[RMDB]
RNA sequence: GGGAACGACUCGAGUAGAGUCGAAAACAGGAGUCUGCUGGCGGAGUUUACACUGCCACUAUGCGCGCCACGCGGACGGGCGUGGUGACGGUGAGCUCUAUUGUGAACGGCAUCCAGCUGGCGCAGCAGUCACCGGUGGUUUCGACCACCGGUGACUAAAAGAAACAACAACAACAAC
Reactivity to 2A3 in 0.01 (KOAc 150mM, MgCl2 10mM, bicine 150mM(pH8.5), 24C), signal-to-noise 2, nucleotides 027 to 126: c000a030g070g000a010g040u030c000u050g000c000u000g010g020c030g000g100a070g000u000u010u000a030c050a000c000u110g000c000c000a000c010u010a040u190g140c200g000c000g020c030c000a030c060g030c020g150g180a120c010g010g140g000c020g010u030g000g000u020g020a000c000g020g000u020g000a150g000c000u060c040u120a070u120u170g000u020g080a050a000c000g040g000c070a000u000c000c000a000g030c030u040g000g010c030g000c030a090g160c080